[RMDB]
An RNA of 177 nucleotides, treated with DMS and 2A3 and read out base by base. For 2A3 the reverse transcriptase was SuperScript II with manganese. The RNA was probed in 150 mM KOAc, 10 mM MgCl2 and 150 mM bicine (pH 8.5) at 24 C.

RNA sequence: GGGAACGACUCGAGUAGAGUCGAAAAAGCCACCGUACGCGGUGGCAAACGGGUAUUCUUGGGUUGAUAAUACAGAUGUCGAUGUUAUUGCUUGAGAAUACGCGUAGAGCCGGCAUACGUGCCGGCAUUUACCCCAGGUUUUCGAACCUGGGGUAAAAAAAGAAACAACAACAACAAC
Reactivity to DMS in 0.01 (KOAc 150mM, MgCl2 10mM, bicine 150mM(pH8.5), 24C), signal-to-noise 1, nucleotides 027 to 126: a110g010c000c000a000c000c010g070u000a080c120g010c020g000g020u000g030g020c030a000a030a010c000g040g010g000u010a000u000u020c000u000u000g000g000g000u010u090g030a000u000a000a010u000a060c160a300g010a190u000g000u080c230g040a210u000g010u000u000a000u000u000g000c010u000u000g000a030g000a040a020u000a000c000g000c020g030u010a060g000a100g010c000c020g010g000c000a070u020a130c180g030u020g000c010c010g010g020c010a000
Reactivity to 2A3 in 0.01 (KOAc 150mM, MgCl2 10mM, bicine 150mM(pH8.5), 24C), signal-to-noise 3, nucleotides 027 to 126: a020g000c000c000a010c020c010g000u010a040c300g020c000g100g020u020g000g000c000a000a000a000c000g010g010g000u000a000u000u000c000u020u020g020g000g000u080u300g090a020u030a040a000u080a050c110a070g150a270u200g220u270c110g100a120u090g020u050u020a000u000u010g010c020u020u000g000a010g020a020a000u050a000c070g010c000g110u050a110g070a010g100c000c000g000g000c000a030u050a040c100g060u010g000c000c000g010g020c000a000